[RMDB]
RNA sequence: GGGAACGACUCGAGUAGAGUCGAAAAACAUAGCACAACUGAUAACAUCAAUGCACAUGGUGUGCGCAGAUUCAAGGGCCUUGACAUGGUUGCCAUUCGGCGCCCAAGUGCUAUGAGACCACGAAAGGAGUAGAGUCCUGUUCGCAGGACUCUACUCAAAAGAAACAACAACAACAAC
Reactivity to DMS in 0.01 (KOAc 150mM, MgCl2 10mM, bicine 150mM(pH8.5), 24C), signal-to-noise 1, nucleotides 027 to 126: a060c000a000u000a010g010c010a030c010a300a090c050u000g040a180u000a090a060c100a030u000c020a050a040u000g010c200a050c220a160u000g050g000u000g040u000g040c110g010c110a050g000a180u000u010c170a170a200g000g000g000c000c020u000u000g030a040c270a020u000g010g000u010u040g000c050c000a070u000u000c010g010g010c140g020c020c020c030a020a080g010u000g000c020u040a010u000g000a090g000a210c010c040a100c170g000a070a130a000g020
Reactivity to 2A3 in 0.01 (KOAc 150mM, MgCl2 10mM, bicine 150mM(pH8.5), 24C), signal-to-noise 1, nucleotides 027 to 126: a040c010a000u020a000g000c000a000c000a010a090c030u070g040a100u050a170a070c010a050u070c020a040a040u160g090c090a140c020a130u080g010g000u120g020u020g000c050g000c040a010g020a130u170u060c090a030a150g020g010g010c000c020u110u230g050a010c020a080u060g040g060u170u200g170c030c020a000u020u070c050g000g000c030g000c060c000c000a050a010g010u000g000c020u010a040u000g000a000g030a010c030c040a030c080g100a130a090a000g140
Conditions: 150 mM KOAc, 10 mM MgCl2 and 150 mM bicine (pH 8.5), 24 C.
Structure probing data (DMS and 2A3) for a 177-nucleotide construct.
2A3 adducts were read by reverse transcription with SuperScript II with manganese.
For DMS, 623 sequencing reads were counted.